[RMDB]
RNA sequence: GGGAACGACUCGAGUAGAGUCGAAAAGUCAUUAACGCGUGUGCACUCUCUAACACGAAUUACCCAGUUAUUUUCGACUUUACUGGAGUCGUUAUAGCGUGAUAUGAGAGAGUAAUCCGCGACCAAACGCUUUAAUUAUAUUCGUAUAAUUAAAGCGAAAAGAAACAACAACAACAAC
Reactivity to DMS in 0.01 (KOAc 150mM, MgCl2 10mM, bicine 150mM(pH8.5), 24C), signal-to-noise 4, nucleotides 027 to 126: g010u010c170a100u010u000a020a030c060g020c020g020u000g000u000g000c120a070c010u000c000u000c010u000a190a020c020a010c010g000a180a120u010u010a140c110c090c080a160g010u000u000a030u000u000u000u000c010g000a020c000u000u000u000a010c010u000g000g010a010g000u000c000g020u000u010a030u000a070g010c010g000u010g000a030u000a080u010g010a050g010a050g000a050g010u010a140a100u000c010c000g010c010g010a140c020c030a080a100a110
Reactivity to 2A3 in 0.01 (KOAc 150mM, MgCl2 10mM, bicine 150mM(pH8.5), 24C), signal-to-noise 4, nucleotides 027 to 126: g060u060c070a140u090u160a090a020c060g010c010g110u010g000u020g020c020a030c090u000c000u000c000u000a020a000c000a000c020g050a050a130u140u100a130c020c030c030a020g040u020u060a060u030u020u000u010c010g010a000c000u000u020u010a000c000u060g160g000a000g000u000c000g000u000u010a010u010a000g000c000g020u140g040a010u010a030u160g040a030g010a000g000a010g010u020a010a050u000c020c000g000c000g010a010c000c000a080a100a010